The record gives the reactivity of an RNA of 207 nucleotides to 2A3 and DMS.
DMS adducts were read by reverse transcription with MarathonRT.
The RNA was probed in 150 mM KOAc, 10 mM MgCl2 and 150 mM bicine (pH 8.5) at 24 C.
For DMS, 2,072 sequencing reads were counted.
For 2A3, 1,071 sequencing reads were counted.

[RMDB]
RNA sequence: GGGAACGACUCGAGUAGAGUCGAAAAGGUCAGGCCUGAUCGGAAACAGCAGCAGGUGAGUCCGCCUUAUGUGAAGGAUCGGCUGAAACACGAGGAAAUACUGAGCCAACGCAAGACGGAAGCCGAAAAAAUCUAGUUCACUUCGGUGAACUAGAAAUCUUAUGGGUUUGUUCGCAAACCCAUAAGAAAAAGAAACAACAACAACAAC
Reactivity to 2A3 in 0.01 (KOAc 150mM, MgCl2 10mM, bicine 150mM(pH8.5), 24C), signal-to-noise 2, nucleotides 027 to 156: g060g000u050c010a040g030g070c020c040u110g030a060u060c030g020g080a090a030a080c040a020g090c010a000g000c000a000g010g020u060g030a030g050u040c010c000g000c000c000u060u060a160u110g110u020g060a040a030g050g000a030u060c020g010g000c040u030g030a040a060a020c070a010c080g040a020g030g090a140a030a040u120a080c040u070g010a010g050c010c010a050a030c030g000c040a070a000g030a040c040g060g010a030a020g020c000c000g020a090a000a010a010a000a000u030c010u000a020g000u010u000c000a000c000u010u010c120g070g000u000g000a010a010c000u000a000g000a010a000a000
Reactivity to DMS in 0.01 (KOAc 150mM, MgCl2 10mM, bicine 150mM(pH8.5), 24C), signal-to-noise 1, nucleotides 027 to 156: g040g000u000c070a150g010g000c060c000u010g020a090u000c030g010g020a150a060a090c020a090g020c050a060g020c130a080g000g040u000g020a120g040u010c000c020g000c010c010u000u010a100u010g020u000g000a050a180g020g010a130u000c100g020g040c010u000g000a130a110a050c080a130c060g010a200g040g010a040a080a090u000a060c030u010g010a030g010c000c010a030a190c060g000c030a030a100g000a100c010g010g000a090a140g040c050c020g000a000a010a070a090a050a120u000c000u000a020g000u020u000c000a010c010u000u000c240g010g000u000g010a000a010c100u000a000g000a000a020a040